The record gives the reactivity of an RNA of 177 nucleotides to 2A3 and DMS. Source: RMDB libraries RFM100 and RFMREP, as collected in RNAgym. Conditions: 150 mM KOAc, 10 mM MgCl2 and 150 mM bicine (pH 8.5), 24 C. DMS adducts were read by reverse transcription with MarathonRT.
RNA sequence: GGGAACGACUCGAGUAGAGUCGAAAAGUGAAACAGUACCUGAAACCGUGCGCCCGCAAGGCGUCGGAGCACCCUUUUAGAGGUGUGACGGCGUGCCUUUUGUAGAAUGAGCCAGCGAGUUGCUGGCCUCAACCAAUCCUUUCGAGGAUUGGUUGAGAAAAGAAACAACAACAACAAC
Reactivity to 2A3 in 0.01 (KOAc 150mM, MgCl2 10mM, bicine 150mM(pH8.5), 24C), signal-to-noise 5, nucleotides 027 to 126: g100u070g050a080a030a030c030a040g050u060a070c030c010u070g040a100a030a020c030c010g020u030g020c000g000c010c020c010g040c050a010a010g030g000c000g000u000c000g000g000a000g010c000a000c010c010c000u030u140u070u220a160g050a130g000g010u010g020u030g010a010c000g000g000c010g030u110g050c000c000u070u090u040u090g100u060a070g050a210a130u160g010a010g010c000c000a000g000c030g080a150g260u170u170g060c000u000g000g000c000
Reactivity to DMS in 0.01 (KOAc 150mM, MgCl2 10mM, bicine 150mM(pH8.5), 24C), signal-to-noise 6, nucleotides 027 to 126: g010u010g020a100a060a100c080a120g020u010a070c030c030u000g000a090a100a080c060c120g000u010g040c050g010c030c000c020g020c150a070a050g000g010c020g010u010c000g010g000a300g000c010a020c000c000c000u020u020u020u020a070g020a080g000g020u000g020u000g000a300c020g010g000c000g010u010g000c010c010u000u000u020u010g020u020a050g010a120a110u030g010a150g000c000c000a010g010c010g010a130g020u050u010g020c010u000g000g000c010